An RNA of 177 nucleotides, treated with DMS and 2A3 and read out base by base. The RNA was probed in 150 mM KOAc, 10 mM MgCl2 and 150 mM bicine (pH 8.5) at 24 C.

RNA sequence: GGGAACGACUCGAGUAGAGUCGAAAAGAUAUGGAGGUCGAUAGGGAGGGUGUCGGAAACGACAUGCCUUUGAUCUAUCAGACCUCCUAAGUCAAAACCUUCGUUGAUCUUCGGAUCAACGAAGGAACCUGAUAUGUAACUUCGGUUACAUAUCAGGAAAAGAAACAACAACAACAAC
Reactivity to DMS in 0.01 (KOAc 150mM, MgCl2 10mM, bicine 150mM(pH8.5), 24C), signal-to-noise 3, nucleotides 027 to 126: g000a040u000a300u010g000g000a020g020g030u010c010g000a010u000a010g000g020g000a000g010g000g020u000g010u010c000g010g010a090a070a120c000g010a010c000a010u000g010c000c000u000u000u020g010a080u000c010u000a000u000c000a130g020a010c000c000u000c000c010u000a000a070g000u010c020a090a100a110a120c000c000u010u000c000g010u000u000g000a010u000c000u000u000c200g010g000a000u000c000a010a010c000g000a000a000g000g010a010a040
Reactivity to 2A3 in 0.01 (KOAc 150mM, MgCl2 10mM, bicine 150mM(pH8.5), 24C), signal-to-noise 5, nucleotides 027 to 126: g030a000u060a030u130g000g000a000g000g010u020c010g010a000u010a010g130g040g000a010g000g010g000u000g000u000c010g020g020a050a040a030c000g020a010c010a020u270g300c000c000u200u070u060g090a090u050c000u000a000u000c050a020g010a000c000c000u000c000c000u020a000a010g000u000c010a010a030a090a190c000c000u000u000c000g000u000u000g010a000u000c010u030u090c300g120g000a000u000c000a000a000c000g000a000a000g000g000a000a000